[RMDB]
RNA sequence: GGGAACGACUCGAGUAGAGUCGAAAAGAGAGACAACAGAUUUGCAUCCCAGACACAUUCACACUGGGCCAAGAGCAGCUGCCAUUGCAGAUUCGAGUCACGUCCUUUUUUCCUUCCUUCUCCUUCUCAGUUCAUUGUGUUUCGACACAAUGAACUGAAAAGAAACAACAACAACAAC
Reactivity to 2A3 in 0.01 (KOAc 150mM, MgCl2 10mM, bicine 150mM(pH8.5), 24C), signal-to-noise 5, nucleotides 027 to 126: g080a000g020a000g020a020c020a060a000c020a080g060a090u060u020u050g020c020a050u080c010c020c010a010g110a010c020a000c010a120u150u180c040a030c020a020c070u030g020g000g000c020c050a150a030g030a030g040c030a010g030c030u100g010c020c010a080u080u100g000c010a010g020a090u060u070c030g030a020g050u030c040a010c120g030u030c000c000u010u020u010u010u020u040c010c000u030u080c010c010u060u060c030u030c030c000u040u000c000u000
Reactivity to DMS in 0.01 (KOAc 150mM, MgCl2 10mM, bicine 150mM(pH8.5), 24C), signal-to-noise 1, nucleotides 027 to 126: g070a190g070a090g020a110c070a060a060c140a080g000a040u070u000u000g010c060a060u000c030c070c020a110g000a010c170a000c170a180u020u040c010a070c130a120c110u000g000g000g040c120c100a180a130g000a160g000c000a090g010c100u000g060c140c110a140u040u110g050c000a110g000a240u000u010c000g000a140g020u000c010a140c130g060u000c070c000u000u000u050u070u070u000c040c060u000u000c030c020u000u010c020u050c000c000u000u060c070u010